Conditions: 150 mM KOAc, 10 mM MgCl2 and 150 mM bicine (pH 8.5), 24 C. This 177-nucleotide RNA was probed chemically with 2A3 and DMS.

[RMDB]
RNA sequence: GGGAACGACUCGAGUAGAGUCGAAAACGCAGUGGCUCAUGCCUGUCAUCCCAGCAUUUUGGGAGGCCAAGGCAGGUGGAUCGCUUUGAGCUCAGGAGUUCAAGACCAGCCUGGGCAACAUGGCAAACGUCCAUCACUGAUUCGUCAGUGAUGGACGAAAAGAAACAACAACAACAAC
Reactivity to 2A3 in 0.01 (KOAc 150mM, MgCl2 10mM, bicine 150mM(pH8.5), 24C), signal-to-noise 3, nucleotides 027 to 126: c130g000c020a030g030u040g040g000c000u030c050a080u090g000c020c010u010g030u010c060a270u010c030c000c000a000g030c220a290u210u260u280u000g020g000g010a000g050g020c040c070a050a040g010g000c000a010g000g030u040g000g070a080u040c050g020c000u050u080u080g080a010g000c000u000c000a000g000g000a030g010u080u110c180a200a060g040a090c000c010a030g020c040c000u000g000g000g000c000a000a000c040a000u080g040g000c010a070a090a000
Reactivity to DMS in 0.01 (KOAc 150mM, MgCl2 10mM, bicine 150mM(pH8.5), 24C), signal-to-noise 1, nucleotides 027 to 126: c050g000c010a110g000u000g000g000c000u010c050a130u010g000c010c000u040g000u000c000a070u040c000c000c000a050g010c300a120u000u000u000u050g000g000g070a010g020g000c130c070a000a160g040g000c020a050g010g060u000g030g000a110u000c080g000c020u000u000u000g050a300g010c050u000c010a010g000g000a070g000u000u010c150a130a120g010a090c150c020a190g010c000c000u000g000g000g000c000a050a110c170a130u000g020g000c080a080a060a300
2A3 adducts were read by reverse transcription with SuperScript II with manganese.